[RMDB]
RNA sequence: GGGAACGACUCGAGUAGAGUCGAAAAUGGUUCGGUUACGUACAUGAUAAACAUGUAUCACUGGGUGUGUCCACCUAGUGGCUGUGGGCCAGUCUAUAGAACGGGCUGAACGCUGGGGCCAUGGGCCACAUCCGUCGCGGUUCGCUGCGAUGGAUGUAAAAGAAACAACAACAACAAC
Reactivity to 2A3 in 0.01 (KOAc 150mM, MgCl2 10mM, bicine 150mM(pH8.5), 24C), signal-to-noise 9, nucleotides 027 to 126: u050g000g000u020u020c010g010g030u050u070a050c030g000u000a000c000a010u000g020a090u090a090a140a010c000a000u010g010u000a020u040c000a000c010u010g000g000g000u000g010u020g090u030c070c000a000c000c000u000a000g000u000g010g000c020u020g010u080g050g020g000c000c000a000g010u000c010u030a160u040a100g070a080a020c040g000g000g000c000u010g020a090a010c030g010c040u040g000g000g050g000c010c000a050u070g030g040g010c010c000
Reactivity to DMS in 0.01 (KOAc 150mM, MgCl2 10mM, bicine 150mM(pH8.5), 24C), signal-to-noise 9, nucleotides 027 to 126: u010g000g000u010u000c020g000g010u010u020a060c140g010u000a010c020a010u000g000a190u070a100a120a190c010a010u000g000u000a020u010c020a020c020u000g000g000g010u000g000u040g010u040c200c010a050c010c010u010a010g010u000g010g000c050u010g020u020g010g000g010c020c010a040g010u010c030u010a130u040a100g010a120a090c110g000g000g010c010u000g000a070a080c120g010c030u000g000g000g000g010c010c020a060u010g000g000g000c020c060
Chemical mapping of a 177-nucleotide RNA with 2A3 and DMS. For DMS the reverse transcriptase was MarathonRT. 2A3 adducts were read by reverse transcription with SuperScript II with manganese. The data come from the RNA Mapping Database (RMDB), library OK1LIB. The 2A3 profile rests on 79,777 reads.